[RMDB]
RNA sequence: GGGAACGACUCGAGUAGAGUCGAAAAAUCUUGGCGAAGUCAGCGCGGAAGGAGCGCGCAACUCCUUACCCUCGCCUUAUUUUUUCCGCUCCCGUUCGCGAAAGCGUUCAGCGGAAAAGGGACCAAAUCUACGCCUACCUUUCGAGGUAGGCGUAGAAAAAGAAACAACAACAACAAC
Reactivity to DMS in 0.01 (KOAc 150mM, MgCl2 10mM, bicine 150mM(pH8.5), 24C), signal-to-noise 1, nucleotides 027 to 126: a050u020c110u000u000g010g000c000g000a040a110g010u010c150a180g040c180g000c260g010g000a030a020g000g000a010g020c000g010c270g000c160a090a070c010u010c000c000u000u000a070c080c020c030u000c010g000c000c000u000u000a000u000u010u000u000u000u000c000c000g000c010u010c150c150c040g010u000u000c010g030c000g000a080a070a130g000c000g030u010u000c060a010g010c000g000g010a000a000a030a000g000g000g010a150c110c100a100a130a010